The record gives the reactivity of an RNA of 177 nucleotides to DMS and 2A3.
[RMDB]
RNA sequence: GGGAACGACUCGAGUAGAGUCGAAAAGGACUCAUUCCUGCGGUUAUGAUUAUGUCUACAACCCUUUCUUUGUCGAUGUUCAACAGUGGGGUUAUGUAGGCAAUCUUGCUACUAAUCACGAUCGUUACAUUACUAAUUGGUUCGCCAAUUAGUAAUGAAAAGAAACAACAACAACAAC
Reactivity to DMS in 0.01 (KOAc 150mM, MgCl2 10mM, bicine 150mM(pH8.5), 24C), signal-to-noise 9, nucleotides 027 to 126: g010g010a100c150u010c110a260u000u000c010c010u000g010c020g010g000u000u000a050u000g000a020u000u000a040u000g020u000c010u000a010c020a040a070c010c000c010u000u010u010c020u000u010u000g020u000c070g010a160u010g010u010u000c030a020a020c130a040g010u000g000g000g000g010u000u000a040u000g020u000a010g010g010c010a030a050u000c120u010u010g010c130u000a080c220u000a020a020u000c010a030c030g010a010u000c020g000u000u010a150
Reactivity to 2A3 in 0.01 (KOAc 150mM, MgCl2 10mM, bicine 150mM(pH8.5), 24C), signal-to-noise 9, nucleotides 027 to 126: g060g020a060c030u020c110a060u040u020c010c000u010g000c010g000g010u030u020a020u040g010a010u010u040a040u110g010u000c010u000a010c010a030a050c010c000c000u040u260u090c010u070u060u030g030u030c060g180a210u190g120u240u120c020a020a020c010a060g010u020g010g020g010g000u040u040a090u140g000u000a000g000g000c000a000a010u020c020u030u100g060c010u040a080c030u020a010a020u020c010a010c060g020a010u010c000g010u020u050a020
About this RNA:
Source: RMDB library 15KREP, as collected in RNAgym.